[RMDB]
RNA sequence: GGGAACGACUCGAGUAGAGUCGAAAAUUUCAACGGCAGCGCAUACACGAUGCUGAAUGACGUCGGCGGCAGCGACUUUUUCAGAAUGAGUUCAUCAUACCCAUUCACAUAGCCAAAAUAGUUAUGAUAUAGAUAGUGCUUUCGAGCACUAUCUAUAAAAAGAAACAACAACAACAAC
Reactivity to 2A3 in 0.01 (KOAc 150mM, MgCl2 10mM, bicine 150mM(pH8.5), 24C), signal-to-noise 5, nucleotides 027 to 126: u040u030u040c020a050a040c010g030g000c000a010g020c010g010c030a020u070a150c070a020c120g040a030u070g010c010u030g080a070a090u120g040a030c060g030u030c010g020g040c000g030g000c010a020g010c010g030a050c000u100u090u010u050u080c060a060g020a080a040u050g010a050g040u070u050c020a060u020c000a010u140a100c000c010c000a020u040u050c030a040c010a050u060a020g020c010c000a000a130a070a050u180a030g030u070u040a030u040g060a050
Reactivity to DMS in 0.01 (KOAc 150mM, MgCl2 10mM, bicine 150mM(pH8.5), 24C), signal-to-noise 5, nucleotides 027 to 126: u020u030u010c050a090a170c090g000g030c000a030g010c050g030c050a110u020a100c150a100c060g010a060u010g020c040u010g010a070a050u010g010a080c130g000u000c010g010g010c060g010g000c040a080g000c040g010a050c030u020u020u000u010u000c100a050g020a080a020u010g000a080g000u010u000c110a060u030c150a060u010a090c010c020c000a050u010u010c030a140c070a060u020a060g030c010c080a040a060a080a090u060a080g010u000u010a050u000g010a290